Chemical mapping of a 177-nucleotide RNA with 2A3 and DMS. 2A3 adducts were read by reverse transcription with SuperScript II with manganese. The 2A3 profile rests on 5,838 reads.
RNA sequence: GGGAACGACUCGAGUAGAGUCGAAAAGAUAUGGAUGUGCAGGAGCGAAGAACAUUAGGUCACACAGAAGUAUAUCGGAAACGAUAUACUUCUGUUAAGCUAAUGGGAGCUCCAACAUCCUAAGUCAGUUAUAGUACCUCUUCGGAGGUACUAUAACAAAAGAAACAACAACAACAAC
Reactivity to 2A3 in 0.01 (KOAc 150mM, MgCl2 10mM, bicine 150mM(pH8.5), 24C), signal-to-noise 3, nucleotides 027 to 126: g020a010u080a030u100g010g010a030u010g040u090g110c300a300g080g000a010g000c030g160a300a040g000a050a020c000a000u010u030a060g250g200u230c050a100c030a000c010a240g020a010a000g010u020a000u000a010u000c000g000g000a050a080a010c000g000a000u000a000u010a020c000u000u000c000u000g000u000u000a000a000g030c000u000a000a000u000g000g000g000a010g000c000u010c000c000a000a010c000a010u000c000c000u010a080a010g060u020c130a040
Reactivity to DMS in 0.01 (KOAc 150mM, MgCl2 10mM, bicine 150mM(pH8.5), 24C), signal-to-noise 4, nucleotides 027 to 126: g000a070u000a300u000g000g020a010u000g000u000g040c290a170g020g000a020g020c000g030a100a180g000a150a240c000a000u000u000a010g000g010u000c100a150c300a060c020a000g000a030a000g000u000a000u010a010u010c000g010g000a090a050a180c010g000a010u000a000u000a000c010u000u010c000u000g010u000u000a070a200g000c000u000a010a010u000g000g010g010a090g010c000u000c000c000a080a010c000a020u000c000c000u000a040a080g010u000c040a110